[RMDB]
Structure probing data (DMS and 2A3) for a 170-nucleotide construct.
The RNA was probed in 150 mM KOAc, 10 mM MgCl2 and 150 mM bicine (pH 8.5) at 24 C.
It was measured as part of the RMDB library 15KLIB.
DMS adducts were read by reverse transcription with MarathonRT.

RNA sequence: GGGAACGACUCGAGUAGAGUCGAAAAUUCGAUCCGGACCGGCUCAUCUCGGCAAAAGGCGGCAGUCCUCAGUACUCUUACUCUUUCCUAUAAAGAGGAGACUGCUGGACUCGCCGCCCAAGCCCGACACGCGAGGCCUUCGGGCCUCGCAAAAGAAACAACAACAACAAC
Reactivity to DMS in 0.01 (KOAc 150mM, MgCl2 10mM, bicine 150mM(pH8.5), 24C), signal-to-noise 2, nucleotides 027 to 129: u010u000c060g000a040u020c060c070g000g000a140c220c120g000g090c020u030c030a010u000c100u060c010g000g070c010a070a160a170a090g030g010c040g000g060c010a120g020u000c010c000u000c000a000g050u070a120c020u060c060u030u100a300c000u040c010u110u000u010c220c240u070a150u040a150a000a000g060a030g050g000a000g040a150c010u020g030c100u010g030g000a040c020u000c240g020c010c000g000c000c000c000a040a180g000c030c000c160g010a030c300a200c020
Reactivity to 2A3 in 0.01 (KOAc 150mM, MgCl2 10mM, bicine 150mM(pH8.5), 24C), signal-to-noise 2, nucleotides 027 to 129: u050u030c030g030a020u010c010c010g000g050a040c060c030g000g000c030u000c000a060u030c000u020c010g010g000c040a000a000a090a000g010g020c000g000g000c000a000g000u000c020c020u030c010a020g010u170a300c000u020c010u110u100a160c000u040c000u050u040u030c050c110u110a110u110a300a010a010g000a000g010g000a010g000a010c000u010g020c010u000g030g000a000c010u000c090g000c000c000g000c000c000c000a000a000g000c000c000c010g040a030c030a010c060